[RMDB]
RNA sequence: GGGAACGACUCGAGUAGAGUCGAAAAGAUAUGGAUUUCUUGUCAGAGCAUCAUUUUAAUGGACUUCUGGUCGGAAACGACCACUAGUCCAUUAAAAUAGUGCUCUUGGAUUUAGAAAUCCUAAGUCCCUAUGGAUAUCGUUCGCGAUAUCCAUAGGAAAAGAAACAACAACAACAAC
Reactivity to DMS in 0.01 (KOAc 150mM, MgCl2 10mM, bicine 150mM(pH8.5), 24C), signal-to-noise 1, nucleotides 027 to 126: g000a140u010a300u000g020g000a000u000u000u000c000u000u000g000u000c000a020g000a010g030c010a000u000c040a000u000u000u000u000a000a000u000g010g010a010c020u000u010c110u010g010g010u000c000g010g000a090a120a280c000g000a010c010c000a000c030u000a010g010u000c000c000a010u000u000a000a000a010a000u000a040g000u000g010c000u000c000u000u010g040g020a020u000u010u000a010g010a010a020a010u000c010c000u010a080a100g010u000c040